[RMDB]
RNA sequence: GGGAACGACUCGAGUAGAGUCGAAAAGUGGGAUGUGCGUCUCACCUGAAGAGGACAAAAGUCCGAAACGGUAUGUUAGUCUUUAUUUCUCGCUGAAAGUUUUAAGUCGGAAGAAGUUUCUUCCUGAGCCAUUGUUAAGGUUCGCCUUAACAAUGGCAAAAGAAACAACAACAACAAC
Reactivity to DMS in 0.01 (KOAc 150mM, MgCl2 10mM, bicine 150mM(pH8.5), 24C), signal-to-noise 1, nucleotides 027 to 126: g000u000g020g020g010a000u010g010u010g020c120g000u010c040u010c040a040c020c040u010g030a080a140g000a230g000g020a040c000a050a130a120a270g010u010c020c000g030a120a080a100c070g010g020u000a050u000g000u030u010a090g000u000c050u000u000u000a000u000u000u000c020u000c010g010c080u020g000a040a040a160g000u010u020u010u010a020a130g010u030c120g010g010a000a010g010a060a210g020u000u000u010c010u000u000c000c030u000g010a190